Conditions: 150 mM KOAc, 10 mM MgCl2 and 150 mM bicine (pH 8.5), 24 C.
The record gives the reactivity of an RNA of 177 nucleotides to 2A3 and DMS.
The 2A3 profile rests on 2,365 reads.
It was measured as part of the RMDB library M2PK90.
For DMS, 2,232 sequencing reads were counted.
RNA sequence: GGGAACGACUCGAGUAGAGUCGAAAAAGAGCCGACGAACCUUCCUACCUUCCAACCUUCCAACCUUCCAACCUUCCAACCUUCCAAUCUACUCGAGAGGAGGAGGAGGAGGAGGAGGAGGACAUAAUAAUAUAGCUCCAUUCGUGGAGCUAUAUUAAAAAGAAACAACAACAACAAC
Reactivity to 2A3 in 0.01 (KOAc 150mM, MgCl2 10mM, bicine 150mM(pH8.5), 24C), signal-to-noise 2, nucleotides 027 to 126: a000g040a040g070c030c020g010a040c020g010a050a080c000c010u030u000c010c010u030a070c010c020u010u040c010c030a060a040c010c020u070u090c030c020a110a110c000c030u050u030c030c000a100a090c030c010u060u000c000c060a100a110c010c000u090u050c010c010a030a060u000c010u040a080c020u040c040g020a020g010a030g080g000a030g020g040a050g020g040a060g000g000a030g000g040a020g000g050a030g000g030a040g030g000a010c030a040u300a120a060
Reactivity to DMS in 0.01 (KOAc 150mM, MgCl2 10mM, bicine 150mM(pH8.5), 24C), signal-to-noise 3, nucleotides 027 to 126: a100g020a150g020c040c030g030a080c110g010a100a120c040c010u000u000c030c000u020a060c040c030u000u000c010c060a090a140c040c020u000u000c030c010a080a100c030c010u000u010c020c010a100a090c030c000u000u000c020c020a080a070c090c020u000u020c030c040a100a170u000c020u000a030c050u000c060g010a010g020a250g000g010a140g000g000a180g000g010a130g000g000a160g020g020a130g000g020a100g000g020a120g000g000a300c180a030u000a040a060